This 207-nucleotide RNA was probed chemically with DMS and 2A3. For DMS the reverse transcriptase was MarathonRT. For 2A3 the reverse transcriptase was SuperScript II with manganese. The reactions ran in a buffer of 150 mM KOAc, 10 mM MgCl2 and 150 mM bicine (pH 8.5), at 24 C.
RNA sequence: GGGAACGACUCGAGUAGAGUCGAAAAAUCACCGGUGGGGAACCCCAUACGGCAACGGCGUAGAAGUAAAUGCUAACCAAUCCGUGGUAUCUACGCGACGGAGCAUCCACGUAUAACUCUAACAAGGCUAAGCGUCUCGGUUUCGACCGAGACGCAAGUUACUAGGAUGAUUCGUCAUCCUAGUAACAAAAGAAACAACAACAACAAC
Reactivity to DMS in 0.01 (KOAc 150mM, MgCl2 10mM, bicine 150mM(pH8.5), 24C), signal-to-noise 1, nucleotides 027 to 156: a110u000c070a090c000c020g000g060u000g000g020g050g020a120a120c160c010c010c030a050u000a100c010g030g020c000a120a090c060g010g000c000g040u020a010g010a020a080g020u000a020a000a160u000g020c020u000a090a240c110c060a200a070u000c070c040g050u000g000g000u000a050u010c010u000a010c030g010c000g010a140c040g000g020a150g020c020a100u000c020c050a040c000g000u000a070u000a070a060c040u020c090u000a130a220c100a040a100g010g010c010u020a090a120g070c010g050u000c000u000c000g080g040u010u000u010c290g010a070c090c000g010a000g000a000c000g030c000a060a020
Reactivity to 2A3 in 0.01 (KOAc 150mM, MgCl2 10mM, bicine 150mM(pH8.5), 24C), signal-to-noise 3, nucleotides 027 to 156: a000u050c010a000c000c000g020g000u010g000g000g010g110a090a120c060c020c000c000a010u140a200c030g020g000c030a070a030c060g010g020c000g000u000a000g010a020a010g000u080a040a030a020u030g030c070u100a030a130c030c050a050a060u080c050c010g000u000g000g000u010a010u030c000u010a000c010g020c010g060a060c070g030g040a010g000c000a000u000c000c020a020c000g010u010a080u050a140a060c030u080c060u190a130a000c070a130a020g100g000c070u160a150a060g000c000g010u000c000u000c010g020g040u020u090u100c160g050a020c010c000g000a000g030a000c000g000c000a010a000